[RMDB]
RNA sequence: GGGAACGACUCGAGUAGAGUCGAAAAUUUCAGCAUGUCGUGCGUAUUUGGAUUCACGCACGACACAGCAGUUAACAAUCGAAGUCUUAGUGACUGUCGAUGGUGUAAAUUUUAGAACAGUCGUUCUGUUGGAUAUUUACUUCGGUAAAUAUCCAACAAAAGAAACAACAACAACAAC
Reactivity to DMS in 0.01 (KOAc 150mM, MgCl2 10mM, bicine 150mM(pH8.5), 24C), signal-to-noise 3, nucleotides 027 to 126: u000u000u000c100a140g020c010a300u000g000u000c000g030u000g000c000g020u010a090u000u000u030g000g000a260u000u000c190a010c010g000c000a010c000g000a020c000a000c060a070g010c000a060g000u000u000a100a050c040a080a020u000c000g020a110a010g020u000c000u010u020a150g010u010g020a020c000u000g010u000c000g010a010u000g000g020u000g000u010a020a030a020u000u000u000u000a110g000a060a090c160a030g000u000c020g020u000u000c000u010
Reactivity to 2A3 in 0.01 (KOAc 150mM, MgCl2 10mM, bicine 150mM(pH8.5), 24C), signal-to-noise 4, nucleotides 027 to 126: u010u030u030c020a010g010c000a010u020g000u000c000g000u020g010c010g010u040a080u070u190u200g240g070a140u110u120c060a000c000g000c000a000c000g000a010c000a000c000a010g000c000a010g040u050u090a090a000c030a030a020u000c000g000a020a000g040u000c010u080u170a140g060u110g210a010c010u080g180u060c000g000a010u010g010g030u040g000u020a040a070a070u040u060u030u030a040g010a060a000c010a020g020u010c000g000u020u000c000u020